[RMDB]
RNA sequence: GGGAACGACUCGAGUAGAGUCGAAAAGCUGCCUCUGACGUCCUUCUCCCCCGGAAACGGGGCCGAAGGGUGGUAAGGCGCGUCGCCUGGCGCUUGCACGGGUAUGCGUGGGGGUCGACCCUGGCCGCGGGUAAAUAGGAUUCGUCCUAUUUACCCGAAAAGAAACAACAACAACAAC
Reactivity to DMS in 0.01 (KOAc 150mM, MgCl2 10mM, bicine 150mM(pH8.5), 24C), signal-to-noise 6, nucleotides 027 to 126: g010c030u000g020c010c000u000c070u000g010a140c090g010u000c010c000u000u000c000u000c300c000c000c010c000g010g000a060a070a210c010g030g000g010g030c050c070g000a010a010g000g010g000u000g010g000u000a090a060g010g010c020g010c020g020u000c110g030c020c020u000g010g010c030g010c130u000u000g000c050a100c070g000g000g020u000a040u010g010c000g010u010g000g000g000g010g010u000c080g010a100c020c010c010u000g020g010c050c110g010
Reactivity to 2A3 in 0.01 (KOAc 150mM, MgCl2 10mM, bicine 150mM(pH8.5), 24C), signal-to-noise 4, nucleotides 027 to 126: g020c020u040g000c000c010u050c110u140g090a030c010g020u020c010c010u000u020c010u050c010c000c000c000c000g000g000a000a020a010c000g000g000g000g000c000c000g000a000a000g020g000g000u020g010g040u060a030a030g040g000c010g000c000g040u030c090g030c010c020u030g030g010c040g030c160u160u300g030c120a110c120g060g000g000u070a040u140g020c030g030u150g000g030g000g000g010u080c070g060a220c030c000c000u010g060g050c060c030g040

Chemical mapping of a 177-nucleotide RNA with DMS and 2A3.
For 2A3 the reverse transcriptase was SuperScript II with manganese.
The DMS profile rests on 9,708 reads.
Source: RMDB library OK2TRN, as collected in RNAgym.
Conditions: 150 mM KOAc, 10 mM MgCl2 and 150 mM bicine (pH 8.5), 24 C.
High 2A3 reactivity points to a flexible backbone, as in loops and unpaired stretches.
Reactivities are given for positions 27 through 126.